[RMDB]
RNA sequence: GGGAACGACUCGAGUAGAGUCGAAAAGAAUAACGGGAACAAGUCAGCAAAUCGUUGUUCCAGUUGCUACCAGCACACUGUAUCCAGAUAUUUGCCGUGACGAGAAAAGGAUAUUUAGAACUGUUAAGCUGCUAUCCAGCUUCGGCUGGAUAGCAGCAAAAGAAACAACAACAACAAC
Reactivity to 2A3 in 0.01 (KOAc 150mM, MgCl2 10mM, bicine 150mM(pH8.5), 24C), signal-to-noise 1, nucleotides 027 to 126: g000a000a050u030a020a000c080g130g070g000a080a050c110a030a260g070u110c000a000g000c000a020a010a010u220c020g110u120u040g070u030u000c040c000a000g000u030u030g030c000u140a120c020c020a000g110c010a000c000a020c070u050g000u010a130u040c020c000a010g000a110u020a200u090u040u080g000c010c030g050u060g030a120c120g090a000g150a150a000a110a000g080g000a000u020a080u140u180u130a010g040a110a100c030u000g070u240u030a000a100
Annotation:
The record gives the reactivity of an RNA of 177 nucleotides to 2A3. 2A3 adducts were read by reverse transcription with SuperScript II with manganese. The 2A3 profile rests on 385 reads. The reactions ran in a buffer of 150 mM KOAc, 10 mM MgCl2 and 150 mM bicine (pH 8.5), at 24 C.